[RMDB]
Structure probing data (DMS and 2A3) for a 177-nucleotide construct. Conditions: 150 mM KOAc, 10 mM MgCl2 and 150 mM bicine (pH 8.5), 24 C. Values cover nucleotides 27 to 126. For 2A3 the reverse transcriptase was SuperScript II with manganese. It was measured as part of the RMDB library OK1LIB. The DMS profile rests on 10,885 reads.
RNA sequence: GGGAACGACUCGAGUAGAGUCGAAAAUACGCCUGAUGGCGAACGUGCGCAAGAUAAGAAUGGUCGUAUAAAAAGACACCGCAAGCGAACAGCCGGAAGAGCGCACGCGCGGUGUCUUAAUACCAGACAUACUACUCCGUUUCGACGGAGUAGUAUGAAAAGAAACAACAACAACAAC
Reactivity to DMS in 0.01 (KOAc 150mM, MgCl2 10mM, bicine 150mM(pH8.5), 24C), signal-to-noise 5, nucleotides 027 to 126: u040a080c060g000c010c010u000g010a120u030g000g030c020g000a140a110c030g020u000g000c000g000c020a160a090g010a140u020a110a080g020a100a090u010g010g010u020c100g010u010a050u030a040a050a050a030a020g000a010c000a000c000c000g030c000a160a130g010c050g000a090a080c040a140g000c000c050g010g020a080a140g010a160g020c020g000c040a020c020g030c140g000c000g000g000u000g010u010c000u000u000a020a050u050a080c030c040a020g000a240
Reactivity to 2A3 in 0.01 (KOAc 150mM, MgCl2 10mM, bicine 150mM(pH8.5), 24C), signal-to-noise 9, nucleotides 027 to 126: u110a000c020g020c010c000u150g110a160u290g050g010c030g020a050a040c030g050u120g000c010g000c020a060a050g050a260u190a150a050g100a130a110u100g050g000u080c050g020u070a020u080a110a120a030a000a000g000a000c010a000c000c000g000c040a110a100g020c030g070a090a070c020a050g020c010c010g090g040a120a030g050a030g030c020g000c010a000c000g000c000g000c000g000g000u000g000u000c000u000u020a020a000u060a020c000c010a000g020a060